Source information
An RNA of 170 nucleotides, treated with 2A3 and DMS and read out base by base. 2A3 adducts were read by reverse transcription with SuperScript II with manganese. Conditions: 150 mM KOAc, 10 mM MgCl2 and 150 mM bicine (pH 8.5), 24 C. For DMS the reverse transcriptase was MarathonRT. High DMS reactivity at an A or C suggests that its Watson-Crick edge is free. Reactivities are given for positions 27 through 129. The data come from the RNA Mapping Database (RMDB), library 15KLIB.
RNA sequence: GGGAACGACUCGAGUAGAGUCGAAAACCCGGGGAUCGGUGAAUCGUCCCGGAAUGGGGACUCCGAGGGCCCCUUCCGAAGUGACGGGGGGGGGUCACUAGGAACACUGGGGUCCAGUGGAUCCGUGCAACUUGACAGUUCGCUGUCAAGAAAAGAAACAACAACAACAAC
Reactivity to 2A3 in 0.01 (KOAc 150mM, MgCl2 10mM, bicine 150mM(pH8.5), 24C), signal-to-noise 9, nucleotides 027 to 129: c010c000c000g000g010g000g010a060u090c040g020g030u130g100a150a090u120c060g010u030c000c000c000g030g270a110a070u170g020g010g000g020a010c030u000c020c010g020a090g010g010g000c010c010c000c000u010u010c010c000g040a150a040g070u050g100a040c040g010g000g000g000g000g000g000g000g000u000c000a010c040u030a030g010g020a020a020c080a030c070u050g000g000g010g040u030c020c000a020g040u120g080g010a040u010c010c000g010u070g030c010a080a080
Reactivity to DMS in 0.01 (KOAc 150mM, MgCl2 10mM, bicine 150mM(pH8.5), 24C), signal-to-noise 9, nucleotides 027 to 129: c000c000c000g010g010g000g010a080u030c050g020g030u000g020a140a070u040c070g000u020c000c020c000g030g040a080a090u070g000g000g000g000a040c010u000c010c010g010a140g020g000g000c000c000c000c000u020u020c020c020g000a120a130g010u040g030a070c090g030g020g000g000g020g010g000g020g030u010c000a030c040u000a170g010g020a050a130c200a050c120u010g010g010g010g020u020c010c010a040g000u000g040g000a030u030c020c010g000u060g040c110a090a110